RNA sequence: GGGAACGACUCGAGUAGAGUCGAAAAGAUCGAUGUUUGCCAACUUCCUCAUAUGUCCUAUACAUGGCAAACAUCGAUAGGCGUGAGACUGAGGAAGUGGUAGAUAUGUGAGGUCUCAUGCCUCACACUACACGGAUCUAUUCGUAGAUUCGUGUAGAAAAGAAACAACAACAACAAC
Reactivity to 2A3 in 0.01 (KOAc 150mM, MgCl2 10mM, bicine 150mM(pH8.5), 24C), signal-to-noise 9, nucleotides 027 to 126: g130a010u030c010g000a000u010g010u000u000u000g000c010c010a060a050c050u030u020c010c010u020c020a030u070a050u220g100u070c040c060u130a080u050a200c090a110u150g000g000c000a010a010a000c000a000u000c000g000a010u020a020g010g000c020g000u050g020a040g000a030c030u030g010a020g020g010a030a020g010u030g040g090u170a130g040a180u140a070u190g130u070g080a070g010g050u010c030u010c070a020u090g000c000c000u010c000a030c000a010
Reactivity to DMS in 0.01 (KOAc 150mM, MgCl2 10mM, bicine 150mM(pH8.5), 24C), signal-to-noise 9, nucleotides 027 to 126: g010a050u000c010g020a010u000g010u000u000u000g000c000c000a110a230c060u000u000c010c010u000c040a130u010a060u000g010u010c120c140u000a090u010a090c140a190u000g010g010c010a010a010a010c000a000u000c010g000a010u000a010g010g010c020g000u000g000a040g010a060c050u000g000a100g010g010a030a020g010u000g010g010u000a080g000a100u000a060u000g010u000g010a150g010g000u000c050u000c060a040u000g010c000c000u000c070a040c160a140